An RNA of 207 nucleotides, treated with 2A3 and read out base by base.
[RMDB]
RNA sequence: GGGAACGACUCGAGUAGAGUCGAAAAUAAAACUAGGACUCUCACCUUUCCACUUCUGAGUCCCAGAAGUAACCCAAGGCAUUUCACUACAAGCAGGCCUACUGUUACUAACAUGACAAAAACUAGCCCCAUUAUCAGUACUAUGCCAAAUCUCACAGUACAUGCUUAGGUUCGCCUAAGCAUGUACAAAAGAAACAACAACAACAAC
Reactivity to 2A3 in 0.01 (KOAc 150mM, MgCl2 10mM, bicine 150mM(pH8.5), 24C), signal-to-noise 2, nucleotides 027 to 156: u070a000a020a040a010c060u050a050g020g000a020c010u000c020u040c110a140c010c060u030u130u140c070c020a100c020u040u030c010u070g040a040g040u030c000c000c000a030g010a080a020g020u030a040a050c000c040c000a040a040g000g000c010a020u050u160u190c080a070c060u130a040c020a210a020g020c060a060g020g030c000c000u010a000c070u060g030u030u030a030c040u060a110a090c030a100u140g050a010c060a040a110a010a020a000c030u060a030g020c000c000c040c050a030u100u040a050u110c020a000g020u000a010c020u000a000u070g010c010c020a020a140a110u020c100u070c060a040c020a000

It was measured as part of the RMDB library PDB130.